[RMDB]
RNA sequence: GGGAACGACUCGAGUAGAGUCGAAAAGUCCCCUGGGCGCCCCCACACGGCUAGACGCCUCGGCUGGUUCGCGACGCAGCCCCCCGGCCGUGGAUGCUGCACUCGGGCUCGGGAUCCGCCCAGGUAGCGACGGUUACCGAUUCGUCGGUAACCGUCGAAAAGAAACAACAACAACAAC
Reactivity to 2A3 in 0.01 (KOAc 150mM, MgCl2 10mM, bicine 150mM(pH8.5), 24C), signal-to-noise 1, nucleotides 027 to 126: g150u050c030c030c000c000u030g000g010g010c040g000c000c000c000c030c000a060c000a010c030g030g000c000u040a050g040a070c040g090c000c000u020c030g000g000c000u000g070g000u100u150c090g070c130g030a190c140g010c110a070g010c000c000c000c000c000c000g000g030c000c060g020u000g010g000a020u080g000c010u050g060c070a090c090u060c050g070g000g000c040u030c040g060g020g000a040u070c080c000g000c000c030c000a000g010g000u000a000g000